The data come from the RNA Mapping Database (RMDB), library M2RFPK. Chemical mapping of a 207-nucleotide RNA with 2A3 and DMS. For 2A3 the reverse transcriptase was SuperScript II with manganese.

RNA sequence: GGGAACGACUCGAGUAGAGUCGAAAACAGAACUGGAUGGGCCGUGUGCUUAACCAGGACAAGAUCUCCUUCUCUCCAACGUUGUUGCCAACUCAUAAUUCUCCUAACCUGUGCUUGGAGAGACGUGCUACCAUAUAGGUGUUCGCACCUAUAUGAAGUUGGUUAGAUAGUUCGCUAUCUAACCAACAAAAGAAACAACAACAACAAC
Reactivity to 2A3 in 0.01 (KOAc 150mM, MgCl2 10mM, bicine 150mM(pH8.5), 24C), signal-to-noise 2, nucleotides 027 to 156: c060a070g070a070a040c000u020g000g080a090u030g080g030g000c070c040g230u230g090u240g130c030u080u020a120a090c000c000a000g060g010a000c040a050a080g020a140u030c020u030c060c010u050u030c020u040c000u000c000c000a020a000c110g000u000u000g000u020u020g060c080c010a080a030c150u090c090a090u110a200a070u160u030c070u100c050c010u060a110a230c020c070u140g000u080g180c090u000u010g000g000a010g010a000g010a020c030g050u080g030c040u130a140c060c000a000u000a000u000a000g030g000u020g010u010u030c150g010c060a000c000c000u000a010u000a010u010g010a030a030
Reactivity to DMS in 0.01 (KOAc 150mM, MgCl2 10mM, bicine 150mM(pH8.5), 24C), signal-to-noise 1, nucleotides 027 to 156: c090a120g020a090a180c010u000g000g010a220u010g030g010g060c010c080g000u010g050u030g060c020u000u020a100a150c030c000a040g010g040a140c060a060a100g010a160u010c040u060c030c010u000u000c030u000c010u010c020c030a090a080c080g020u000u000g000u000u000g000c010c060a060a080c020u000c050a080u000a140a100u020u000c010u000c010c020u000a050a090c090c070u000g000u010g030c040u000u020g000g010a060g010a020g040a030c100g060u020g030c020u000a190c110c020a050u010a000u000a010g010g050u000g020u020u000c300g030c010a010c000c000u000a030u020a000u000g000a020a150